An RNA of 177 nucleotides, treated with 2A3 and DMS and read out base by base. 2A3 adducts were read by reverse transcription with SuperScript II with manganese. The 2A3 profile rests on 5,498 reads. DMS adducts were read by reverse transcription with MarathonRT. For DMS, 5,226 sequencing reads were counted. Source: RMDB library OK2TST, as collected in RNAgym. Values cover nucleotides 27 to 126.
[RMDB]
RNA sequence: GGGAACGACUCGAGUAGAGUCGAAAAGCAAAAACAGCUUGCAAUCCAGGAGGGAAAGCUGGAAACUCUGCAAUCCACUGUUGGGAAAAUCUAUGCUAAAGUUGACCUGAUCAAGGAUCAUGUCUCGCAGUUGGAUGUAUUUCGAUACAUCCAACUGAAAAGAAACAACAACAACAAC
Reactivity to 2A3 in 0.01 (KOAc 150mM, MgCl2 10mM, bicine 150mM(pH8.5), 24C), signal-to-noise 4, nucleotides 027 to 126: g010c020a020a050a050a030a040c010a020g030c010u010u060g030c030a010a040u000c020c000a010g060g070a100g020g050g010a060a090a010g010c020u030g050g000a060a060a040c100u060c010u060g000c010a010a040u040c050c010a060c100u070g120u090u070g020g010g020a030a100a030a050u040c050u070a080u140g050c030u120a150a050a020g070u050u020g030a010c000c020u000g010a060u040c100a150a080g090g010a020u010c000a020u070g040u000c020u010c060g040
Reactivity to DMS in 0.01 (KOAc 150mM, MgCl2 10mM, bicine 150mM(pH8.5), 24C), signal-to-noise 5, nucleotides 027 to 126: g010c020a030a060a090a060a070c090a050g000c060u000u010g010c090a070a120u000c020c010a070g010g000a160g010g010g000a070a070a110g000c030u000g010g010a070a080a130c120u010c080u000g010c020a060a110u000c040c100a060c080u010g000u010u000g000g000g010a080a060a080a050u010c060u000a060u010g010c070u000a060a070a080g010u010u000g010a060c020c040u000g010a060u000c090a100a110g000g000a040u000c040a030u000g010u010c010u000c100g000